[RMDB]
RNA sequence: GGGAACGACUCGAGUAGAGUCGAAAAUUGUAUUUUUUCAUAUGUUCCUCCUAUUUAAAACCUGCAUUAGUGCUCUUAAACUAGUGUUAUUGUGGGCCGGUACUAUUACUUUGAACAAAUAAGAGUGUUACCUAAGAUUCUUCGGAAUCUUAGGUAAAAAAGAAACAACAACAACAAC
Reactivity to DMS in 0.01 (KOAc 150mM, MgCl2 10mM, bicine 150mM(pH8.5), 24C), signal-to-noise 4, nucleotides 027 to 126: u010u020g010u020a020u000u000u000u000u000u000c020a080u030a090u000g000u000u000c000c000u000c110c080u000a070u010u020u000a100a070a080a130c040c030u010g020c010a020u010u000a030g010u010g000c030u000c070u000u020a060a090a100c160u000a010g000u010g010u000u010a020u010u010g020u000g000g010g020c120c050g020g010u010a040c150u020a070u010u000a060c070u000u000u010g010a070a100c170a050a040a060u010a050a060g000a060g020u000g000
Reactivity to 2A3 in 0.01 (KOAc 150mM, MgCl2 10mM, bicine 150mM(pH8.5), 24C), signal-to-noise 4, nucleotides 027 to 126: u030u060g080u070a100u070u090u000u000u010u020c040a050u120a080u210g000u020u010c000c000u100c020c020u190a260u170u190u190a090a150a050a050c000c000u010g000c000a010u010u010a010g000u020g050c010u000c010u080u230a110a100a030c020u010a010g020u010g000u030u040a060u010u040g030u010g000g020g000c020c040g030g020u040a050c020u040a070u140u030a050c040u120u020u160g100a090a030c040a080a050a100u130a110a030g030a010g060u080g030
The record gives the reactivity of an RNA of 177 nucleotides to DMS and 2A3. Conditions: 150 mM KOAc, 10 mM MgCl2 and 150 mM bicine (pH 8.5), 24 C. Reactivities are rounded to 0.1 and cut off at 0 and 3. It was measured as part of the RMDB libraries RFM100 and RFMREP.